[RMDB]
RNA sequence: GGGAACGACUCGAGUAGAGUCGAAAACACUGCGUCUGCCAAUUUCGUGAUUGUCGCAGAGAGGGUCGAAGUCACCAAUAAUUUCAAUUUCUAAGCUGGCUACCGGUAAGUGCCACUGCCCGGAUUCCGUACGACUAGGUUUCGACCUAGUCGUACGAAAAGAAACAACAACAACAAC
Reactivity to 2A3 in 0.01 (KOAc 150mM, MgCl2 10mM, bicine 150mM(pH8.5), 24C), signal-to-noise 2, nucleotides 027 to 126: c010a000c030u040g010c000g040u000c020u060g040c080c000a070a110u050u140u190c120g070u120g070a050u000u040g050u060c020g010c050a020g020a000g050a030g030g060g000u020c020g030a070a050g050u040c040a010c050c020a010a060u140a120a090u000u170u100c040a050a070u020u090u070c060u090a100a030g020c040u010g060g000c010u050a050c020c010g000g080u070a030a050g030u020g050c040c030a010c000u020g000c000c000c000g010g030a090u150u040c040
Reactivity to DMS in 0.01 (KOAc 150mM, MgCl2 10mM, bicine 150mM(pH8.5), 24C), signal-to-noise 2, nucleotides 027 to 126: c050a110c030u000g030c070g000u000c030u000g000c030c020a070a030u020u000u000c230g010u000g020a030u000u000g000u010c140g000c060a030g010a090g000a160g000g010g030u000c030g010a050a080g010u000c010a060c020c040a070a050u000a070a070u000u020u000c070a050a160u000u000u000c080u000a040a130g010c050u000g000g010c080u000a070c090c050g000g000u010a040a070g020u000g010c050c010a030c040u000g000c030c000c010g000g010a170u000u010c100
Source: RMDB library OK2TST, as collected in RNAgym.
Structure probing data (2A3 and DMS) for a 177-nucleotide construct.
For DMS the reverse transcriptase was MarathonRT.
Reactivities are given for positions 27 through 126.
For 2A3 the reverse transcriptase was SuperScript II with manganese.
The reactions ran in a buffer of 150 mM KOAc, 10 mM MgCl2 and 150 mM bicine (pH 8.5), at 24 C.